[RMDB]
RNA sequence: GGGAACGACUCGAGUAGAGUCGAAAACGUUGAUAUCGUCCAACCGAAUCGUUGACGUCACCAGCGACUCCACCGGCAGACGGCCCGAUUGCCACAACGACACGAAGCGGGGAAUGUCGUGGCUGGGCGUAUCGAUGUUUUUCGAAACAUCGAUACGAAAAGAAACAACAACAACAAC
Reactivity to 2A3 in 0.01 (KOAc 150mM, MgCl2 10mM, bicine 150mM(pH8.5), 24C), signal-to-noise 9, nucleotides 027 to 126: c020g020u020u060g050a060u040a060u180c040g020u040c070c030a060a040c050c020g090a070a070u140c070g020u020u060g020a020c040g020u050c020a020c070c010a020g030c010g040a050c020u010c030c010a070c030c010g040g000c020a020g030a090c030g080g030c000c010c010g050a110u060u150g050c020c010a010c020a120a070c070g040a000c010a000c100g100a070a050g040c050g020g020g000g030a030a090u080g010u050c070g040u020g040g000c030u040g030g010g000
Reactivity to DMS in 0.01 (KOAc 150mM, MgCl2 10mM, bicine 150mM(pH8.5), 24C), signal-to-noise 6, nucleotides 027 to 126: c090g010u000u000g010a080u010a050u020c030g010u010c060c090a070a100c090c070g000a080a070u020c120g010u010u010g000a070c060g000u000c050a090c050c040a080g000c010g010a090c040u010c040c050a090c070c040g000g000c120a060g020a060c040g000g000c020c010c020g000a070u010u020g010c000c030a040c090a120a070c090g020a030c040a030c110g020a090a110g020c050g000g000g000g010a120a100u010g010u000c010g020u020g010g010c050u000g010g000g020
The record gives the reactivity of an RNA of 177 nucleotides to 2A3 and DMS. The reactions ran in a buffer of 150 mM KOAc, 10 mM MgCl2 and 150 mM bicine (pH 8.5), at 24 C.